[RMDB]
Structure probing data (2A3 and DMS) for a 177-nucleotide construct.
Values cover nucleotides 27 to 126.
The reactions ran in a buffer of 150 mM KOAc, 10 mM MgCl2 and 150 mM bicine (pH 8.5), at 24 C.
RNA sequence: GGGAACGACUCGAGUAGAGUCGAAAACAGGUCAAGUCCGCCGUUGGCAACCGAGGUACCUUCGACGCGAGUACCCCGGACAUUUUGUUCAGUCGGUCUGGCCUACGCGAAAUUGCCGGCAAGGCGAGACACUGAAUAGUUUCGACUAUUCAGUGUCAAAAGAAACAACAACAACAAC
Reactivity to 2A3 in 0.01 (KOAc 150mM, MgCl2 10mM, bicine 150mM(pH8.5), 24C), signal-to-noise 8, nucleotides 027 to 126: c060a010g010g020u020c040a110a150g030u010c020c010g000c020c010g120u130u140g010g000c000a010a020c000c010g000a010g000g010u020a020c040c000u060u110c080g230a230c110g030c090g130a030g000u010a010c000c000c000c000g020g010a050c060a080u210u270u050u020g020u070u210c060a020g030u080c010g000g010u000c010u010g020g000c000c000u020a040c110g030c010g040a090a060a090u140u150g000c010c010g060g080c150a110a080g020g000c010g010a030
Reactivity to DMS in 0.01 (KOAc 150mM, MgCl2 10mM, bicine 150mM(pH8.5), 24C), signal-to-noise 4, nucleotides 027 to 126: c130a040g020g020u000c010a060a100g020u010c020c010g020c060c090g030u010u000g010g020c000a030a040c010c010g000a030g000g000u000a010c020c080u010u000c090g010a130c140g040c140g000a080g020u000a020c010c000c010c010g000g000a120c160a080u000u000u000u000g020u000u010c070a130g000u000c000g010g000u000c020u000g010g010c010c010u000a060c100g010c080g000a060a080a140u010u010g010c010c010g010g020c180a120a170g010g010c010g010a130